Source information:
The record gives the reactivity of an RNA of 177 nucleotides to 2A3 and DMS. Source: RMDB library OK1LIB, as collected in RNAgym. The 2A3 profile rests on 1,240 reads. The reactions ran in a buffer of 150 mM KOAc, 10 mM MgCl2 and 150 mM bicine (pH 8.5), at 24 C.

[RMDB]
RNA sequence: GGGAACGACUCGAGUAGAGUCGAAAAGAAGAGCAGGCAGAUAAUCUUGUGCAGUAUGCAUGCUCUUAACUCCACAAGAAGGAAGGCAGCAAAAGAAUAACUGCCACUGCACAAGUGGAGCCGCAGAAGGUAGCAUACGGUUCGCCGUAUGCUACCUAAAAGAAACAACAACAACAAC
Reactivity to 2A3 in 0.01 (KOAc 150mM, MgCl2 10mM, bicine 150mM(pH8.5), 24C), signal-to-noise 2, nucleotides 027 to 126: g120a000a010g000a000g020c000a010g040g020c000a000g050a240u220a000a160u150c000u020u000g020u040g040c000a040g000u040a040u130g000c010a000u040g000c000u000c000u000u000a040a030c010u020c000c000a070c030a060a110g120a020a000g080g010a020a230g020g000c000a000g000c090a130a000a000a040g260a030a220u080a060a000c000u000g050c000c000a000c000u000g000c000a000c000a020a000g000u060g010g000a010g010c000c000g050c060a020g030a220
Reactivity to DMS in 0.01 (KOAc 150mM, MgCl2 10mM, bicine 150mM(pH8.5), 24C), signal-to-noise 1, nucleotides 027 to 126: g000a050a000g030a000g000c000a020g000g030c000a020g060a010u110a110a160u000c060u000u000g000u000g000c060a000g000u020a090u040g000c000a090u000g000c000u000c010u000u010a030a130c210u000c000c040a020c090a190a120g040a000a080g000g020a090a080g000g010c000a040g060c150a000a070a080a060g000a270a070u010a180a260c000u010g000c000c000a290c060u000g060c020a100c020a000a150g000u050g050g000a000g000c000c060g000c250a130g020a190
The DMS profile rests on 1,283 reads. 2A3 adducts were read by reverse transcription with SuperScript II with manganese.